[RMDB]
RNA sequence: GGGAACGACUCGAGUAGAGUCGAAAAGAUAUGGAGAUCACGGCUAACUUUGAUCGUAGUUCGGAAACGAACUACGGGAGUUAACCGUGAGUCUCCUAAGUCAAAGCACGAUCUUCGGAUCGUGCAAGCAUACAAUACUGUUCGCAGUAUUGUAUGCAAAAGAAACAACAACAACAAC
Reactivity to DMS in 0.01 (KOAc 150mM, MgCl2 10mM, bicine 150mM(pH8.5), 24C), signal-to-noise 7, nucleotides 027 to 126: g010a050u010a300u010g000g010a010g020a220u000c000a000c000g010g010c030u000a000a010c000u000u000u010g000a120u010c000g020u000a010g010u000u000c000g010g010a120a120a250c000g010a010a010c010u000a000c000g010g000g000a000g020u000u000a000a020c000c000g010u000g000a030g010u010c000u000c000c000u000a010a070g010u000c040a120a130a170g010c000a020c010g000a020u000c000u000u000c270g020g010a010u000c000g010u000g010c010a010a040
Reactivity to 2A3 in 0.01 (KOAc 150mM, MgCl2 10mM, bicine 150mM(pH8.5), 24C), signal-to-noise 6, nucleotides 027 to 126: g040a030u120a040u200g000g000a010g000a010u010c000a010c010g010g010c020u020a030a010c020u200u210u170g130a140u300c010g000u000a000g000u000u010c000g010g000a050a080a060c010g000a000a000c010u000a000c000g000g000g000a020g000u010u020a010a000c000c000g010u000g000a000g000u010c000u000c000c000u000a080a000g010u010c060a160a070a030g000c000a000c000g010a010u000c000u050u170c300g180g000a000u000c000g000u000g010c000a000a000

This 177-nucleotide RNA was probed chemically with DMS and 2A3. It was measured as part of the RMDB library TTRDES. The RNA was probed in 150 mM KOAc, 10 mM MgCl2 and 150 mM bicine (pH 8.5) at 24 C. The DMS profile rests on 15,396 reads.